Annotation
Source: RMDB library M2PK50, as collected in RNAgym. The record gives the reactivity of an RNA of 177 nucleotides to DMS and 2A3. The RNA was probed in 150 mM KOAc, 10 mM MgCl2 and 150 mM bicine (pH 8.5) at 24 C. DMS adducts were read by reverse transcription with MarathonRT. The DMS profile rests on 4,901 reads.
[RMDB]
RNA sequence: GGGAACGACUCGAGUAGAGUCGAAAAGGGUAGAUCUUCGGAUCUACCCAAAAGGAGCAACCAACGAAGGUAGUGCUAGCAUAAGCGUGCAGGCUAGCACUAAAAGGUUCCGCUUCGGCGGAACCAAGCAAUAUAUUCACUUCGGUGAAUAUAUUGCAAAAGAAACAACAACAACAAC
Reactivity to DMS in 0.01 (KOAc 150mM, MgCl2 10mM, bicine 150mM(pH8.5), 24C), signal-to-noise 4, nucleotides 027 to 126: g000g010g020u000a010g000a010u000c000u010u020c200g020g010a020u000c000u000a010c010c000c000a000a010a060a070g020g010a080g010c080a090a120c030c050a080a100c150g000a140a110g010g000u000a010g000u000g000c010u000a020g000c010a070u000a090a100g020c090g010u000g010c090a150g000g000c000u000a010g000c000a010c000u000a020a030a090a120g010g000u000u000c010c010g010c000u000u010c180g030g000c000g030g000a010a000c000c010a030a040
Reactivity to 2A3 in 0.01 (KOAc 150mM, MgCl2 10mM, bicine 150mM(pH8.5), 24C), signal-to-noise 4, nucleotides 027 to 126: g010g010g010u030a010g000a010u030c030u050u080c250g030g010a000u000c000u000a000c010c000c000a000a000a000a000g020g000a070g040c030a040a030c020c010a010a050c090g110a130a020g140g020u080a000g000u010g000c010u000a000g000c010a060u050a300a090g080c090g120u140g040c060a010g060g040c000u000a000g010c000a000c000u000a000a000a010a010g000g000u000u000c000c000g000c000u040u040c190g100g000c000g000g000a000a000c000c000a010a010